[RMDB]
RNA sequence: GGGAACGACUCGAGUAGAGUCGAAAAUGCGGACACCGAGCAAGGGGGUGAAGACGACAAUCCUUUUGUAUCACUGUGCUCGGUAGGGAUGCUUGAAGAGCAUGAAAAGGGACUUUCGGAGGCCUCAGAUUCAGAGAUCAUUCGUGAUCUCUGAAUCAAAAGAAACAACAACAACAAC
Reactivity to DMS in 0.01 (KOAc 150mM, MgCl2 10mM, bicine 150mM(pH8.5), 24C), signal-to-noise 4, nucleotides 027 to 126: u040g020c060g030g010a230c080a070c000c010g000a010g000c020a050a110g000g000g020g000g020u000g000a040a100g020a090c130g020a060c170a050a080u010c150c070u010u040u010u020g010u030a060u000c070a050c010u020g010u000g010c000u000c000g000g000u010a030g000g000g000a120u010g000c020u010u020g000a050a050g010a050g000c010a010u010g000a040a060a100a080g010g020g000a120c100u000u020u010c070g030g000a060g000g010c040c020u010c070a140
Reactivity to 2A3 in 0.01 (KOAc 150mM, MgCl2 10mM, bicine 150mM(pH8.5), 24C), signal-to-noise 7, nucleotides 027 to 126: u120g010c010g030g010a010c000a020c030c000g010a000g020c010a010a070g140g030g000g020g020u040g040a090a030g140a050c130g030a020c080a040a110u160c060c010u060u120u070u140g110u070a100u100c010a020c080u060g010u010g100c000u010c000g000g000u000a000g000g040g000a020u040g030c000u030u050g100a110a050g020a000g070c030a020u070g120a070a060a000a060g040g000g030a060c010u040u090u070c150g080g010a030g050g020c000c010u040c030a020
Structure probing data (DMS and 2A3) for a 177-nucleotide construct. For 2A3 the reverse transcriptase was SuperScript II with manganese. The RNA was probed in 150 mM KOAc, 10 mM MgCl2 and 150 mM bicine (pH 8.5) at 24 C. The DMS profile rests on 9,337 reads. Values cover nucleotides 27 to 126. The 2A3 profile rests on 8,099 reads.